[RMDB]
RNA sequence: GGGAACGACUCGAGUAGAGUCGAAAAGCAUAAUUCAUUUAUGCAUUCCAUUUUUCAAGUCCAAAAGAAAUCCACUCUUGUUUAGAGAUGAAACUUCUUCAUAGUUUUUUCUUCAGACGGAGAGCGAUGAUAGCUUACCUUUCGAGGUAAGCUAUCAAAAAGAAACAACAACAACAAC
Reactivity to DMS in 0.01 (KOAc 150mM, MgCl2 10mM, bicine 150mM(pH8.5), 24C), signal-to-noise 3, nucleotides 027 to 126: g000c000a000u000a000a020u010u030c230a150u040u000u030a000u000g000c000a120u010u010c000c010a100u020u040u020u050u020c080a070a080g000u020c090c070a040a100a110a080g010a050a090a120u010c120c070a140c020u000c000u000u010g020u010u000u000a110g000a030g020a010u000g000a020a010a020c000u000u010c230u050u010c220a090u030a030g010u010u000u000u000u000u010c000u020u000c050a010g010a010c010g000g000a000g010a050g000c210g020a110
Reactivity to 2A3 in 0.01 (KOAc 150mM, MgCl2 10mM, bicine 150mM(pH8.5), 24C), signal-to-noise 8, nucleotides 027 to 126: g010c000a010u020a020a040u170u280c120a080u140u040u020a000u000g010c000a000u020u010c010c000a050u100u070u020u040u170c080a100a060g100u070c070c060a040a080a060a020g100a050a120a030u040c040c010a050c030u010c010u080u270g010u050u040u060a040g010a000g010a010u000g010a010a010a000c010u060u050c030u180u120c140a110u190a120g010u000u000u000u000u000u000c010u020u030c010a000g010a020c010g030g000a010g000a010g040c060g030a040